[RMDB]
RNA sequence: GGGAACGACUCGAGUAGAGUCGAAAAAAACACCGUCCUGCUCAGCGAUAACGUCCUGCAUGCCUGGCGUAUGCUCAUCGUAAACUGCGUGGUCAGAUAGUUGACGAGCUCACGCUUUAUCGCUGGUCUAAUGUUACCGGUUCGCCGGUAACAUUAGAAAAGAAACAACAACAACAAC
Reactivity to DMS in 0.01 (KOAc 150mM, MgCl2 10mM, bicine 150mM(pH8.5), 24C), signal-to-noise 2, nucleotides 027 to 126: a030a030a070c130a120c050c040g010u000c010c010u010g030c040u010c020a060g030c010g010a020u000a020a060c050g010u000c140c070u010g000c040a030u050g000c030c040u030g000g030c090g000u010a040u000g000c010u000c070a070u010c010g000u060a060a040a040c060u000g000c000g000u010g000g000u000c020a070g000a110u020a090g020u020u000g000a070c100g010a200g010c060u000c080a000c000g000c020u000u010u000a030u000c020g000c000u010g000g000u000
Reactivity to 2A3 in 0.01 (KOAc 150mM, MgCl2 10mM, bicine 150mM(pH8.5), 24C), signal-to-noise 7, nucleotides 027 to 126: a000a000a000c120a040c010c030g060u040c010c020u050g030c030u030c080a010g010c000g020a010u020a040a040c020g030u050c020c040u050g010c010a030u050g010c010c000u090g170g000c130g020u010a020u050g020c010u020c050a150u060c040g100u150a030a080a070c030u020g010c030g070u100g040g020u070c010a020g050a200u210a100g180u080u110g040a030c050g020a020g050c030u050c050a010c010g020c000u000u030u020a010u020c000g000c010u000g010g020u020
An RNA of 177 nucleotides, treated with DMS and 2A3 and read out base by base. The reactions ran in a buffer of 150 mM KOAc, 10 mM MgCl2 and 150 mM bicine (pH 8.5), at 24 C. It was measured as part of the RMDB libraries RFM100 and RFMREP. Reactivities are given for positions 27 through 126. For 2A3 the reverse transcriptase was SuperScript II with manganese.